The data come from the RNA Mapping Database (RMDB), library OK3TST. Chemical mapping of a 207-nucleotide RNA with DMS and 2A3. DMS adducts were read by reverse transcription with MarathonRT.

RNA sequence: GGGAACGACUCGAGUAGAGUCGAAAAUCGCAAACAAAAAAGAAGGAAGACGGAGCAGCACAGUCAUCCCUUUGUGAAAAAGGCAUUCAGGAUCUGCAGAGGUGCAAGGCAGGGUGCACCUCUGCCUGGACUGAGCUGGAAAUGCAGCCGUGUGGCAUCAGGGGUAAUGAUUCGUCAUUACCCCUGAAAAAGAAACAACAACAACAAC
Reactivity to DMS in 0.01 (KOAc 150mM, MgCl2 10mM, bicine 150mM(pH8.5), 24C), signal-to-noise 2, nucleotides 027 to 156: u010c070g040c060a070a100a190c070a000a050a060a060a090a090g040a080a080g010g010a070a060g020a060c040g000g000a120g000c070a040g000c070a120c050a130g000u010c000a090u000c030c000c010u000u020u010g030u000g010a090a060a020a050a190g000g040c060a110u010u000c030a090g000g020a150u000c040u010g000c000a050g000a030g030g080u020g000c050a050a050g000g000c080a050g000g070g000u000g000c040a020c030c000u000c020u010g000c000c020u010g030g010a130c030u020g000a100g020c060u030g040g010a070a080a130u010g000c010a070g040c020c020g040u000g020u000g020g000c030a250
Reactivity to 2A3 in 0.01 (KOAc 150mM, MgCl2 10mM, bicine 150mM(pH8.5), 24C), signal-to-noise 2, nucleotides 027 to 156: u100c040g000c090a070a040a070c050a050a090a050a050a020a030g070a010a000g040g010a050a030g050a020c040g050g030a020g070c020a000g000c000a020c000a060g030u030c000a080u090c030c020c000u010u050u060g120u080g110a110a090a000a010a010g040g000c030a010u050u080c020a040g030g080a140u020c030u070g010c000a010g000a000g000g020u020g000c010a010a030g050g010c020a010g090g010g000u010g010c000a000c010c000u000c000u000g000c000c000u060g010g010a010c000u010g040a020g010c030u010g000g050a020a070a000u090g030c000a000g000c010c010g110u110g030u060g040g010c020a030
Annotation
2A3 adducts were read by reverse transcription with SuperScript II with manganese. Reactivities are given for positions 27 through 156.